[RMDB]
RNA sequence: GGGAACGACUCGAGUAGAGUCGAAAAACUGUUGUGGGUCAACUUGAGCAAACUAAUAUGCAUAGUCCUGAUGUUAUAGUAGGUGACUAUGUCAUUAUUAGUGAAAAAUUGUUUGUGCGUAGUAAGGGUAACGACCGGUUCGCCGGUCGUAAAAGAAACAACAACAACAAC
Reactivity to 2A3 in 0.01 (KOAc 150mM, MgCl2 10mM, bicine 150mM(pH8.5), 24C), signal-to-noise 1, nucleotides 027 to 129: a000c000u000g150u020u010g040u050g060g030g010u030c070a090a000c000u000u020g000a000g000c030a020a030a020c000u120a030a030u000a000u070g000c000a000u000a030g040u060c000c000u020g090a140u100g180u300u300a120u130a020g140u000a070g000g140u200g000a020c020u000a010u080g070u110c000a000u020u020a000u000u000a000g000u000g150a000a000a000a030a020u000u050g070u000u000u050g020u000g050c000g110u000a000g040u010a000a000g000g000g000u000a000
Reactivity to DMS in 0.01 (KOAc 150mM, MgCl2 10mM, bicine 150mM(pH8.5), 24C), signal-to-noise 5, nucleotides 027 to 129: a110c080u020g050u000u030g070u000g000g030g090u040c090a090a050c080u050u030g030a050g080c050a060a270a130c040u050a020a020u010a000u050g020c010a010u010a020g010u040c020c010u010g000a090u110g010u030u120a100u000a200g020u000a230g000g000u020g030a030c010u030a020u010g000u050c040a000u040u040a000u010u010a030g000u030g000a040a000a080a000a200u060u000g000u020u000u060g030u000g040c080g100u060a110g040u040a060a050g000g010g030u030a160
Structure probing data (2A3 and DMS) for a 170-nucleotide construct. DMS adducts were read by reverse transcription with MarathonRT. The DMS profile rests on 5,938 reads. For 2A3, 857 sequencing reads were counted.